[RMDB]
RNA sequence: GGGAACGACUCGAGUAGAGUCGAAAAUGCUUUGAGUUCACCAUUUUGAAGGACAAUAGCACAAGGCUAGAUUACAAUAAGUUGAUUGAUCACUGUGUGGAUAUGGAGAAGAAAAGGGACGCAGUCAGGGCAGUGGAAGAUUUGGUUUUAAUGUUAACCUGCACCUAGAUUUCGAUCUAGGUGCAGGAAAAGAAACAACAACAACAAC
Reactivity to 2A3 in 0.01 (KOAc 150mM, MgCl2 10mM, bicine 150mM(pH8.5), 24C), signal-to-noise 1, nucleotides 027 to 156: u020g000c010u040u020u090g040a040g010u040u030c050a110c140c000a000u070u110u150u150g090a060a020g040g010a020c030a070a080u050a080g030c040a000c030a110a000g020g000c040u030a040g020a230u080u050a080c010a030a040u090a130a050g170u240u130g020a130u030u030g000a020u080c030a010c100u010g000u010g030u040g130g000a010u010a040u080g090g000a060g040a050a040g020a030a030a030a040g080g000g000a000c070g000c080a040g110u010c060a040g010g010g000c000a000g000u010g040g000a080a000g000a050u000u090u080g050g010u000u030u030u150a050a040u190g010u120u020a030a010